The record gives the reactivity of an RNA of 177 nucleotides to 2A3 and DMS. Values cover nucleotides 27 to 126. 2A3 adducts were read by reverse transcription with SuperScript II with manganese.
RNA sequence: GGGAACGACUCGAGUAGAGUCGAAAAGCGGCUUCUCUACCUGCUGCAACUGCCUCACCUCACGGGAGGGUCUCUCUACGCAACUUCUGAGUCGAGGUGCAUAAGCAGUGUGGGGGCUGUAGGCCCCGCUCUGCGGUAACUUCGGUUACCGCAGAGCAAAAGAAACAACAACAACAAC
Reactivity to 2A3 in 0.01 (KOAc 150mM, MgCl2 10mM, bicine 150mM(pH8.5), 24C), signal-to-noise 2, nucleotides 027 to 126: g020c040g020g000c010u250u020c030u130c030u070a020c010c010u040g040c010u010g030c030a100a080c040u070g030c020c010u010c020a040c000c000u020c010a030c050g040g000g000a020g030g060g150u020c110u030c020u050c030u140a050c070g020c080a100a070c050u090u100c040u080g070a040g110u080c040g030a010g000g020u060g010c010a070u130a160a030g010c000a010g020u040g000u040g150g020g020g000g000c020u020g050u020a060g130g000c000c000c010c010
Reactivity to DMS in 0.01 (KOAc 150mM, MgCl2 10mM, bicine 150mM(pH8.5), 24C), signal-to-noise 2, nucleotides 027 to 126: g000c030g000g020c030u020u000c040u000c040u000a100c050c030u000g010c000u020g020c200a130a090c150u010g010c040c060u010c020a100c030c070u000c030a130c100g010g000g000a020g000g000g030u010c080u000c040u020c060u020a080c140g050c150a100a130c050u000u000c030u000g000a040g020u000c120g000a060g020g010u000g000c140a110u010a180a080g010c000a000g000u010g010u000g010g000g000g000g030c020u010g010u000a110g030g010c020c000c000c120